[RMDB]
An RNA of 177 nucleotides, treated with 2A3 and DMS and read out base by base. 2A3 adducts were read by reverse transcription with SuperScript II with manganese. For DMS, 1,490 sequencing reads were counted.
RNA sequence: GGGAACGACUCGAGUAGAGUCGAAAAGUAUCCAUGUUCGCAUGGAUACGAAAUAUGCGCGCGUAUAUCCGGUUCGCUGGAUGCGCGCGUCUGGCUGGCCGGUGGUGCUAGUCUUCGGACUAGCAAAGCCAGGAGUACCAUUCGUGGUACUCCUGGCAAAAGAAACAACAACAACAAC
Reactivity to 2A3 in 0.01 (KOAc 150mM, MgCl2 10mM, bicine 150mM(pH8.5), 24C), signal-to-noise 1, nucleotides 027 to 126: g020u000a010u000c000c000a010u000g050u040u050c290g030c140a000u000g020g000a000u000a010c000g000a040a010a000u250a060u070g020c000g000c010g020c000g040u020a110u010a030u250c000c020g030g080u030u120c200g030c140u010g010g000a010u000g020c010g000c000g010c000g040u020c010u010g100g000c000u020g000g000c010c030g120g020u100g030g080u060g000c010u000a000g000u010c000u000u020c220g020g000a000c010u000a000g000c000a020a000a000
Reactivity to DMS in 0.01 (KOAc 150mM, MgCl2 10mM, bicine 150mM(pH8.5), 24C), signal-to-noise 1, nucleotides 027 to 126: g010u000a000u000c000c000a030u000g000u000u030c200g010c020a010u000g000g000a010u000a000c000g020a050a100a140u010a070u020g010c000g020c010g000c000g000u010a090u020a120u000c000c010g020g030u020u000c220g010c000u020g000g030a020u000g000c000g010c010g020c000g010u020c050u010g000g030c020u010g010g000c030c040g030g000u020g030g000u000g010c000u000a000g000u000c000u000u030c200g030g000a010c000u000a010g000c000a040a040a150